[RMDB]
RNA sequence: GGGAACGACUCGAGUAGAGUCGAAAAAAAAUAUGCAAAUGUGUAAGAAAAGCCAGCACAUCCGAUUUUUACUUUUACUUUCACACCUCUGUCCACCAUGUUCCAAGAGAAGAAACUUGGUCAUUGAAAGGAAUAGAUCAAAUCCAAAGAACAAAACGACCACUUAUAUGUUCGCAUAUAAGUGGUCAAAAGAAACAACAACAACAAC
Reactivity to 2A3 in 0.01 (KOAc 150mM, MgCl2 10mM, bicine 150mM(pH8.5), 24C), signal-to-noise 1, nucleotides 027 to 156: a000a000a000a000u220a000u050g010c030a030a000a150u030g000u010g010u040a040a030g010a130a090a000a000g030c050c020a050g050c070a040c020a090u060c010c020g020a010u040u000u000u110u260a070c050u050u080u010u080a080c000u000u040u130c020a000c040a070c020c020u000c020u020g060u000c030c000a010c000c000a020u020g030u060u080c000c000a020a000g030a000g030a140a070g070a140a180a000c000u010u020g030g030u000c000a000u020u120g030a140a000a000g030g000a020a030u010a020g070a080u040c010a030a020a160u020c000c000a070a070a070g070a040a050c110a040a130a000a020c050